[RMDB]
The data come from the RNA Mapping Database (RMDB), library TTRDEL. An RNA of 177 nucleotides, treated with 2A3 and DMS and read out base by base.
RNA sequence: GGGAACGACUCGAGUAGAGUCGAAAAGAUAUGGAACGCCCAUGGGAGCCUGUCGGAAACGACAAGGCAUCGAUCAUGGAGCGUUCCUAAGUCAAAACGGAUUUGGUAGUUCGCUACCAAAUCCGAAGACUAAUUUUGUGUUCGCACAAAAUUAGUCAAAAGAAACAACAACAACAAC
Reactivity to 2A3 in 0.01 (KOAc 150mM, MgCl2 10mM, bicine 150mM(pH8.5), 24C), signal-to-noise 2, nucleotides 027 to 126: g000a010u030a000u070g010g000a000a010c000g000c020c060c000a000u020g300g220g010a010g020c000c000u000g000u000c010g010g000a020a020a010c010g000a010c080a080a180g000g000c030a090u070c000g070a190u200c000a020u010g000g010a130g020c000g000u010u000c010c000u000a010a000g000u000c020a010a010a100a150c030g000g000a010u010u000u010g000g000u010a020g030u060u080c300g040c150u010a010c000c000a000a000a000u000c000c000g000a010a000
Reactivity to DMS in 0.01 (KOAc 150mM, MgCl2 10mM, bicine 150mM(pH8.5), 24C), signal-to-noise 2, nucleotides 027 to 126: g010a020u000a160u000g010g000a000a010c010g010c000c000c010a020u010g020g020g020a080g020c000c000u010g020u000c000g000g010a030a040a090c000g000a020c000a040a080g000g000c000a060u000c050g010a070u020c000a020u010g000g010a140g030c010g010u000u000c000c000u000a000a050g000u000c010a080a050a130a250c000g000g000a010u000u000u000g000g000u000a020g020u000u010c230g010c010u000a010c000c000a000a000a000u000c010c000g010a040a050

The RNA was probed in 150 mM KOAc, 10 mM MgCl2 and 150 mM bicine (pH 8.5) at 24 C. Values cover nucleotides 27 to 126. For DMS, 3,171 sequencing reads were counted.